Chemical mapping of a 177-nucleotide RNA with DMS and 2A3.
The RNA was probed in 150 mM KOAc, 10 mM MgCl2 and 150 mM bicine (pH 8.5) at 24 C.
For 2A3 the reverse transcriptase was SuperScript II with manganese.
The data come from the RNA Mapping Database (RMDB), libraries RFM100 and RFMREP.
RNA sequence: GGGAACGACUCGAGUAGAGUCGAAAAAGGUAACAUUAGACUAUGGGGGUGGGAACCCUUGUAGUUUUAUACCAUAUGAUUAUUCGCUGUUACACUGCGGCUUUCUCAGGAUUGUCAUGGUGGAUGGUUUUCUUUAAUGGUUCGCCAUUAAAGAAAAAAAAGAAACAACAACAACAAC
Reactivity to DMS in 0.01 (KOAc 150mM, MgCl2 10mM, bicine 150mM(pH8.5), 24C), signal-to-noise 7, nucleotides 027 to 126: a050g010g000u000a020a100c160a150u020u010a040g000a010c000u000a000u000g000g000g010g000g020u000g020g060g010a180a030c000c000c000u000u000g010u000a000g000u000u010u000u010a070u000a050c020c010a090u010a080u020g000a120u010u010a070u010u010c070g010c030u000g010u000u000a100c030a050c030u010g010c120g010g000c040u000u010u000c010u000c160a130g020g010a040u000u000g000u000c020a040u010g000g010u000g000g000a050u000g000g000
Reactivity to 2A3 in 0.01 (KOAc 150mM, MgCl2 10mM, bicine 150mM(pH8.5), 24C), signal-to-noise 7, nucleotides 027 to 126: a000g080g020u090a120a040c050a110u070u110a010g000a000c000u000a000u020g010g000g000g020g010u050g020g170g070a090a090c000c000c000u000u000g010u000a000g000u000u020u030u020a010u000a010c000c010a030u050a060u200g120a090u040u160a080u120u160c050g000c030u020g030u040u040a070c030a010c010u020g020c020g010g010c000u030u060u010c030u010c050a090g030g130a070u040u040g000u010c010a010u030g020g000u010g010g040a030u020g030g030